Conditions: 150 mM KOAc, 10 mM MgCl2 and 150 mM bicine (pH 8.5), 24 C. An RNA of 177 nucleotides, treated with 2A3 and DMS and read out base by base. The 2A3 profile rests on 2,327 reads.
[RMDB]
RNA sequence: GGGAACGACUCGAGUAGAGUCGAAAAGAUAUGGAAUCUACAACCUUGGAUUUACCGUCCAUCGGAAACGAUGGAGCGGUUGUCAGGUUUAAGAUUCCUAAGUCAAACGUCACGUUCGCGUGACGAACCCGAAUUAGAACUUCGGUUCUAAUUCGGGAAAAGAAACAACAACAACAAC
Reactivity to 2A3 in 0.01 (KOAc 150mM, MgCl2 10mM, bicine 150mM(pH8.5), 24C), signal-to-noise 1, nucleotides 027 to 126: g010a010u050a050u210g010g000a020a020u000c000u020a030c070a100a000c020c000u070u300g300g060a120u300u300u220a010c000c010g020u000c010c000a010u020c010g040g000a110a000a000c020g000a000u020g030g010a060g140c000g000g000u000u020g020u020c010a010g000g000u000u020u030a020a020g000a000u000u000c010c000u000a070a010g010u000c030a130a070a060c030g020u040c000a000c000g030u110u070c300g010c000g120u030g010a010c010g020a030a010
Reactivity to DMS in 0.01 (KOAc 150mM, MgCl2 10mM, bicine 150mM(pH8.5), 24C), signal-to-noise 1, nucleotides 027 to 126: g000a020u020a300u000g000g010a030a010u000c000u000a200c300a080a000c000c000u010u000g030g020a040u010u010u020a010c000c010g020u000c000c000a010u010c020g020g010a150a020a180c000g000a010u000g000g000a050g000c050g030g000u000u000g040u000c020a000g000g010u000u000u000a200a070g000a020u000u020c000c000u000a000a120g000u000c000a080a160a220c050g030u000c000a030c000g000u020u020c190g040c010g010u000g000a010c000g000a010a050
DMS adducts were read by reverse transcription with MarathonRT. For 2A3 the reverse transcriptase was SuperScript II with manganese. Values cover nucleotides 27 to 126. The DMS profile rests on 971 reads. The data come from the RNA Mapping Database (RMDB), library TTRDES.